[RMDB]
RNA sequence: GGGAACGACUCGAGUAGAGUCGAAAAUUCUGAAUCUCCAGGGCACCAACUCAGCCUCCCUCCUCAACGGCUCCAUGCUGCAGAGAGCUUUGCUUUUACAGCAGUUGCAAGGACUGGACCAGUUUGCCGGGUAGUCCAUUUUCGAAUGGACUACCCGAAAAGAAACAACAACAACAAC
Reactivity to DMS in 0.01 (KOAc 150mM, MgCl2 10mM, bicine 150mM(pH8.5), 24C), signal-to-noise 1, nucleotides 027 to 126: u000u060c160u080g060a050a060u020c040u000c000c050a050g000g000g070c020a120c060c030a120a070c050u040c070a010g000c040c060u000c050c000c000u010c000c000u010c010a060a180c160g000g040c040u000c030c070a080u000g000c010u030g000c020a000g020a110g020a100g000c020u000u020u060g050c000u000u000u000u000a180c110a030g030c000a040g000u000u010g000c000a070a120g010g000a100c140u020g000g000a300c010c040a030g060u000u000u020g020c040
Reactivity to 2A3 in 0.01 (KOAc 150mM, MgCl2 10mM, bicine 150mM(pH8.5), 24C), signal-to-noise 2, nucleotides 027 to 126: u070u030c020u070g050a000a060u040c010u030c020c000a020g000g000g000c030a020c030c020a020a130c030u060c050a010g000c000c000u000c010c000c000u050c000c000u100c070a040a040c070g040g000c000u000c030c010a080u070g000c060u030g000c040a050g090a010g010a010g120c000u050u070u190g010c000u070u010u060u040a030c050a010g000c020a060g020u100u050g010c010a020a080g020g010a030c040u030g000g040a010c000c000a050g020u030u040u090g090c050

An RNA of 177 nucleotides, treated with DMS and 2A3 and read out base by base.
For DMS, 1,182 sequencing reads were counted.